[RMDB]
RNA sequence: GGGAACGACUCGAGUAGAGUCGAAAAGAAAUGUAGGACCAAGCCUACCUUGGGAAAAGAAAUGAUCUGCUACAAGAUCGUAGCGAAAACAAAGCAUGGCAUACCCAUGAGUAUGGAAAGAAAGAAAGGGUAUGUAUGUCUUCGGACAUACAUACCCAAAAGAAACAACAACAACAAC
Reactivity to 2A3 in 0.01 (KOAc 150mM, MgCl2 10mM, bicine 150mM(pH8.5), 24C), signal-to-noise 2, nucleotides 027 to 126: g080a000a180a010u280g000u070a030g060g000a030c090c020a020a030g050c040c000u000a010c000c050u080u080g000g000g050a000a090a030a030g130a000a020a020u090g040a100u000c010u080g000c000u050a000c000a140a090g140a210u170c130g030u030a000g060c000g090a010a170a040a020c150a000a090a010g010c030a020u050g040g000c000a050u110a110c000c000c060a090u050g000a000g060u030a010u070g030g010a160a070a010g110a080a080a000g090a010a120a010
Reactivity to DMS in 0.01 (KOAc 150mM, MgCl2 10mM, bicine 150mM(pH8.5), 24C), signal-to-noise 2, nucleotides 027 to 126: g040a100a110a120u010g000u000a060g000g000a220c060c000a070a040g010c000c000u020a000c070c000u000u000g010g000g030a050a000a130a170g060a000a090a000u000g060a090u040c100u000g010c000u000a000c000a100a210g000a140u000c120g000u000a000g020c000g000a000a070a100a090c090a190a130a100g030c030a040u000g000g020c260a020u000a130c070c000c020a010u000g000a140g000u000a080u130g000g000a020a120a110g010a030a080a100g030a160a100a100